About this RNA
Structure probing data (DMS) for a 177-nucleotide construct. The DMS profile rests on 1,113 reads. It was measured as part of the RMDB library RFMREP. The reactions ran in a buffer of 150 mM KOAc, 10 mM MgCl2 and 150 mM bicine (pH 8.5), at 24 C.

RNA sequence: GGGAACGACUCGAGUAGAGUCGAAAAUGCCAUGUUGCACUAUCAGUAACUUAACAUCAAAGUAGUAAAUAAAAGAACCUGCCUCACCAGCAGGUUUUUUUUGGAGGUUCAUACUUCGGUAUGAACCGAUCGAAAAUGACUUCGGUCAUUUUCGAUCAAAAGAAACAACAACAACAAC
Reactivity to DMS in 0.01 (KOAc 150mM, MgCl2 10mM, bicine 150mM(pH8.5), 24C), signal-to-noise 2, nucleotides 027 to 126: u000g010c010c010a070u000g010u010u010g020c020a110c110u000a060u010c110a120g000u000a040a090c080u010u010a060a140c070a080u010c090a060a100a110g000u020a110g010u000a050a050a120u000a010a000a020a030g000a000a000c000c000u000g020c000c020u000c300a060c300c290a300g000c010a010g020g000u020u000u000u050u000u000u070u020g000g010a120g000g000u000u000c000a020u000a000c000u000u010c170g050g000u000a000u000g010a000a000c010c000